Source: RMDB library 15KREP, as collected in RNAgym. Chemical mapping of a 177-nucleotide RNA with 2A3 and DMS. For 2A3, 12,613 sequencing reads were counted.
[RMDB]
RNA sequence: GGGAACGACUCGAGUAGAGUCGAAAACAUAAGAUGGCGAGAAAUCCACUCAUGGGUCCAUCGUCCAUCUCCUUCUUACCUUUUGGCCGGCAUGGUCCCAGCCUCCUCGCUGGCGCCGGCUGGGCAAGUACAAGUUAAAGUUCGCUUUAACUUGUACAAAAGAAACAACAACAACAAC
Reactivity to 2A3 in 0.01 (KOAc 150mM, MgCl2 10mM, bicine 150mM(pH8.5), 24C), signal-to-noise 4, nucleotides 027 to 126: c030a010u190a080a030g000a010u010g000g000c000g000a010g010a020a030a000u010c010c020a050c090u240c100a270u140g000g000g000u000c030c010a030u010c010g050u060c010c000a010u010c020u050c010c010u120u110c020u070u110a150c020c010u080u090u070u140g120g020c000c010g010g010c070a120u150g040g020u070c000c000c040a000g000c000c020u070c020c030u070c060g020c010u000g000g000c000g000c000c000g070g010c000u010g000g000g010c020a050a050
Reactivity to DMS in 0.01 (KOAc 150mM, MgCl2 10mM, bicine 150mM(pH8.5), 24C), signal-to-noise 6, nucleotides 027 to 126: c160a100u010a080a040g000a020u000g000g000c020g010a030g010a190a290a020u000c010c000a090c300u010c260a090u000g000g020g010u000c060c020a230u000c000g000u010c000c010a010u000c010u000c110c120u000u010c070u000u000a140c070c050u010u000u000u010g020g010c000c000g020g010c010a100u000g020g010u000c300c010c000a040g010c010c110u010c160c080u000c150g000c000u000g000g010c210g010c000c000g000g000c000u000g000g000g020c090a040a060